[RMDB]
RNA sequence: GGGAACGACUCGAGUAGAGUCGAAAAGGAGAUCGGCGCGGACGGAGUCCUCGCCAACCUGGUCAGGGCCGAGAGGCAGCAGCCACAACGAGAUCACCUCUGGGUCGUCUGCCGGUCUCCACCUCAUUUUUUGGUGAUGCUGAUUCGUCAGCAUCACGCUCAAUUACCUAUUCGUAGGUAAUUGAGCAAAAGAAACAACAACAACAAC
Reactivity to DMS in 0.01 (KOAc 150mM, MgCl2 10mM, bicine 150mM(pH8.5), 24C), signal-to-noise 1, nucleotides 027 to 156: g000g040a070g010a020u000c000g040g020c020g000c060g050g000a070c000g020g030a090g020u010c150c050u010c000g020c020c030a050a060c050c060u000g060g050u000c090a260g000g000g000c050c010g020a250g000a300g020g040c020a040g000c040a280g030c020c010a090c060a160a110c050g000a000g000a110u000c030a100c210c020u000c010u000g020g010g010u000c010g000u010c030u010g040c000c050g000g030u000c010u000c010c030a050c050c030u000c050a040u000u020u000u000u020u030g040g020u010g000a010u020g030c000u000g000a100u000u020c210g000u020c000a010g030c030a000u010c000a000c010
Reactivity to 2A3 in 0.01 (KOAc 150mM, MgCl2 10mM, bicine 150mM(pH8.5), 24C), signal-to-noise 5, nucleotides 027 to 156: g010g000a020g000a000u010c010g010g000c010g010c010g020g010a010c010g010g000a010g020u020c000c020u010c010g030c040c030a030a050c030c040u030g000g020u140c010a020g010g020g000c010c010g070a060g000a050g090g000c010a010g000c000a000g000c000c000a020c040a040a040c020g000a010g000a040u130c060a050c060c010u000c000u030g230g030g250u040c000g000u050c160u210g000c000c000g000g000u020c000u010c000c000a000c000c000u060c010a050u050u120u080u070u120u300g140g000u000g000a000u000g000c000u010g000a030u020u030c200g060u010c100a000g000c000a000u000c000a000c000